RNA sequence: GGGAACGACUCGAGUAGAGUCGAAAACACGCCUGUAGUCACAGCUAUUCAAGAGGUGGAGGUGGAAGGAUCACUUGAGCCCAGGCGUUAGAGGUUACAUUGAGCAGGGAUCUCACCACUACACUCCACCAUGUCAAAGCUUCGGCUUUGACAUGGUAAAAGAAACAACAACAACAAC
Reactivity to 2A3 in 0.01 (KOAc 150mM, MgCl2 10mM, bicine 150mM(pH8.5), 24C), signal-to-noise 1, nucleotides 027 to 126: c030a000c040g030c010c010u050g060u070a030g030u070c050a020c020a160g000c030u100a070u260u190c070a030a030g000a060g130g020u060g010g050a130g000g020u040g070g030a080a070g020g010a010u000c000a020c230u040u090g030a010g000c010c030c020a020g030g000c030g040u020u080a040g000a020g070g010u090u040a060c040a100u170u190g050a030g000c030a050g000g000g000a000u000c000u020c010a020c020c000a020c030u060a020c030a020c040u000c000c020
Reactivity to DMS in 0.01 (KOAc 150mM, MgCl2 10mM, bicine 150mM(pH8.5), 24C), signal-to-noise 2, nucleotides 027 to 126: c120a100c110g020c010c020u000g010u000a060g020u000c080a070c150a060g010c110u000a090u010u010c100a070a090g040a110g030g010u000g010g000a070g000g020u000g000g010a080a110g030g010a030u000c000a080c030u000u000g010a100g020c040c060c030a040g020g010c050g020u000u010a050g000a140g000g010u000u010a060c120a110u010u000g010a060g000c040a110g000g000g000a030u000c030u000c110a180c020c000a020c050u020a170c140a070c020u000c000c070